[RMDB]
RNA sequence: GGGAACGACUCGAGUAGAGUCGAAAAGUGGCACAGUUCGCUGUGCCACAAAGGACUACCCGUCAGGGUUAAGGCCAUACGGACAGCCGGGUCGACUGCCGAAAAUCCGUAGCUUCGGCUACGGAAAGACACGGAGAUACUUCGGUAUCUCCGUGUCAAAAGAAACAACAACAACAAC
Reactivity to DMS in 0.01 (KOAc 150mM, MgCl2 10mM, bicine 150mM(pH8.5), 24C), signal-to-noise 1, nucleotides 027 to 126: g000u000g000g010c010a010c000a010g010u020u030c250g030c000u000g000u010g010c000c000a000c000a000a110a090g000g030a050c020u010a050c000c000c010g030u000c260a050g010g020g000u000u000a080a050g000g000c000c030a160u070a180c070g020g000a070c030a070g010c050c010g050g000g000u010c010g050a030c020u000g000c010c030g010a060a030a170a240u000c000c010g020u010a000g000c000u000u010c260g010g000c000u000a000c020g000g000a000a050a050
Reactivity to 2A3 in 0.01 (KOAc 150mM, MgCl2 10mM, bicine 150mM(pH8.5), 24C), signal-to-noise 1, nucleotides 027 to 126: g000u000g010g040c010a020c010a010g000u020u050c130g080c090u000g000u000g000c000c000a000c010a000a030a000g020g010a010c010u080a130c070c000c000g130u180c190a100g060g020g000u090u180a110a090g040g000c000c000a040u080a080c070g010g040a020c030a030g010c030c000g000g020g000u020c010g020a110c040u090g050c020c000g040a050a020a000a020u020c010c010g000u000a020g000c000u030u060c250g060g000c000u000a000c000g010g000a020a000a000

About this RNA: Structure probing data (DMS and 2A3) for a 177-nucleotide construct. For DMS, 731 sequencing reads were counted. For 2A3 the reverse transcriptase was SuperScript II with manganese.